[RMDB]
RNA sequence: GGGAACGACUCGAGUAGAGUCGAAAAAUCGCCGUGGCGCUCGCCGUGCAGGUGCCGCAGGCCGUGGCCCACGCGCCGCAGCGCCGCCUCAUGCACCGCGUCGCCGGUCUGGGGAUAGUCGUGGACGUAGAUGGUCCAAAUUCGUUUGGACCAUCUAAAAAGAAACAACAACAACAAC
Reactivity to 2A3 in 0.01 (KOAc 150mM, MgCl2 10mM, bicine 150mM(pH8.5), 24C), signal-to-noise 2, nucleotides 027 to 126: a000u090c080g060c090c010g030u070g020g040c020g000c020u060c080g030c020c000g000u000g030c050a090g050g050u160g130c040c010g030c030a060g070g130c060c030g030u050g000g030c020c040c000a070c000g020c040g000c030c010g000c040a050g010c000g000c030c000g000c020c000u020c000a040u210g020c080a000c000c020g030c010g150u090c060g040c110c000g000g060u040c040u100g000g020g000g000a020u090a050g040u050c070g060u070g070g030a050c010g040
Reactivity to DMS in 0.01 (KOAc 150mM, MgCl2 10mM, bicine 150mM(pH8.5), 24C), signal-to-noise 4, nucleotides 027 to 126: a070u000c030g000c020c050g020u010g010g010c010g030c050u000c040g030c110c130g000u000g020c050a080g020g010u010g010c050c040g020c010a130g030g000c180c110g000u000g010g000c010c020c050a200c090g010c080g010c060c080g000c080a020g010c010g010c030c020g000c020c020u010c050a080u010g000c070a020c020c090g000c010g000u010c110g030c070c020g010g000u010c010u010g010g020g000g010a130u010a050g000u000c050g000u000g010g000a100c130g010
Overview
Chemical mapping of a 177-nucleotide RNA with 2A3 and DMS. 2A3 adducts were read by reverse transcription with SuperScript II with manganese. For 2A3, 2,274 sequencing reads were counted. Reactivities are given for positions 27 through 126.